[RMDB]
RNA sequence: GGGAACGACUCGAGUAGAGUCGAAAAGGUGUCAUUGCGACGACGAAACACUUCUCGCUGAACUGCAACGAAACCAAUCGGCACUGGCUGGACGCGGUCAUCGAUCCCGACGCGCACCGCGAGUCGGGUCAGGGUGAAUCUUCGGAUUCACCCUGACAAAAGAAACAACAACAACAAC
Reactivity to 2A3 in 0.01 (KOAc 150mM, MgCl2 10mM, bicine 150mM(pH8.5), 24C), signal-to-noise 9, nucleotides 027 to 126: g070g000u050g030u060c060a100u050u170g030c040g040a050c020g020a020c050g030a080a100a010c090a030c070u110u040c030u040c040g020c040u080g040a100a060c040u080g010c040a050a050c050g050a080a000a020c030c010a030a070u050c030g020g000c010a010c060u040g050g020c020u060g030g020a030c020g000c000g030g030u030c010a050u070c050g070a080u080c010c010c010g000a020c020g020c000g000c030a110c090c020g010c010g020a010g020u020c000g020g000
Reactivity to DMS in 0.01 (KOAc 150mM, MgCl2 10mM, bicine 150mM(pH8.5), 24C), signal-to-noise 6, nucleotides 027 to 126: g010g010u010g020u000c020a100u010u020g010c040g000a060c070g000a070c100g010a090a090a080c180a080c110u010u000c040u000c040g030c060u020g000a060a100c090u030g020c020a040a070c070g010a120a080a090c060c060a080a140u010c060g020g020c020a040c040u010g000g000c030u010g000g000a100c060g010c050g000g000u010c030a030u000c060g000a060u010c030c020c020g000a060c000g000c010g010c040a140c120c100g000c000g000a030g000u010c010g010g000